An RNA of 177 nucleotides, treated with DMS and 2A3 and read out base by base. Values are in units of 0.01, from 0 to 300, in steps of 10. The data come from the RNA Mapping Database (RMDB), library TTRDES. Conditions: 150 mM KOAc, 10 mM MgCl2 and 150 mM bicine (pH 8.5), 24 C. The DMS profile rests on 2,028 reads.
RNA sequence: GGGAACGACUCGAGUAGAGUCGAAAAGAUAUGGAAACAUCCGACAUCGAUCUUAUCUUGAUCGGAAACGAUCAAGAGUAAGGGAGUCGGUGUUUCCUAAGUCAAAACUGACCCUUCGGGGUCAGAAGACAUCUAUCUCGUUCGCGAGAUAGAUGUCAAAAGAAACAACAACAACAAC
Reactivity to DMS in 0.01 (KOAc 150mM, MgCl2 10mM, bicine 150mM(pH8.5), 24C), signal-to-noise 2, nucleotides 027 to 126: g010a050u010a300u010g000g010a000a000a010c010a000u020c000c000g000a010c000a300u010c160g000a090u030c000u000u000a050u020c000u000u000g010a000u000c010g000g000a070a070a200c000g000a000u010c000a020a010g000a060g010u000a020a010g020g010g000a020g020u000c000g010g010u000g000u010u000u000c000c000u010a010a130g000u010c030a110a070a170a210c000u000g010a040c010c000c000u000u030c300g040g000g000g010u000c010a000g020a100a090
Reactivity to 2A3 in 0.01 (KOAc 150mM, MgCl2 10mM, bicine 150mM(pH8.5), 24C), signal-to-noise 2, nucleotides 027 to 126: g020a030u060a020u120g000g000a020a010a000c020a030u270c100c030g000a010c030a300u300c170g250a130u080c040u000u020a010u030c000u010u000g010a000u010c000g020g020a070a040a000c010g000a010u000c000a000a000g020a020g020u060a010a010g000g140g080a040g010u000c000g000g000u000g000u000u000u000c000c000u010a040a010g020u000c000a010a010a120a220c010u020g000a010c000c030c000u000u050c300g070g000g010g010u000c000a000g000a010a000